[RMDB]
RNA sequence: GGGAACGACUCGAGUAGAGUCGAAAAACGCCAACGACGACGUUUACGCACUGGCCGCUUAAGCCGGCCGGCCUCUGAUCAGCAGCUCGCUUACAAGCGGCUGGUUGGGGGUAACCCAAUUGUAAGCUCGCGCUGAAGUCUGUCCGGGGCCGAAGCGCAGCGUUAUGUUCUUCGGAACAUAACGCUGAAAAGAAACAACAACAACAAC
Reactivity to DMS in 0.01 (KOAc 150mM, MgCl2 10mM, bicine 150mM(pH8.5), 24C), signal-to-noise 1, nucleotides 027 to 156: a030c000g010c000c010a060a150c300g040a240c020g000a010c010g000u000u000u010a110c080g000c080a090c010u000g020g040c010c020g020c060u000u000a090a140g020c090c010g050g000c020c010g040g020c010c000u010c030u010g040a030u020c000a000g010c010a050g000c010u000c020g000c070u010u000a060c040a020a000g020c010g020g030c000u010g050g010u010u010g020g010g000g030g020u010a010a070c000c020c060a090a090u000u000g000u000a040a070g000c030u020c070g020c000g000c000u010g000a180a040g000u000c010u010g000u000c190c180g110g000g020g000c010c020g000a300a070g030c030g040
Reactivity to 2A3 in 0.01 (KOAc 150mM, MgCl2 10mM, bicine 150mM(pH8.5), 24C), signal-to-noise 2, nucleotides 027 to 156: a000c060g050c040c020a120a030c080g210a030c090g020a000c020g030u040u020u090a080c110g020c050a080c070u040g000g010c000c000g020c060u220u210a160a030g050c120c000g000g000c000c000g010g010c020c000u000c000u020g010a000u010c000a000g000c010a000g010c000u070c070g040c030u040u060a000c000a070a000g000c000g030g010c030u010g000g000u000u000g000g020g000g000g000u010a020a030c010c010c000a070a120u080u010g000u020a020a010g030c020u080c070g010c020g000c000u010g000a030a010g020u040c020u030g160u180c120c070g000g050g000g000c000c000g010a030a000g000c000g000
Structure probing data (DMS and 2A3) for a 207-nucleotide construct. For 2A3 the reverse transcriptase was SuperScript II with manganese. The reactions ran in a buffer of 150 mM KOAc, 10 mM MgCl2 and 150 mM bicine (pH 8.5), at 24 C. It was measured as part of the RMDB library RSTRND. The 2A3 profile rests on 2,017 reads.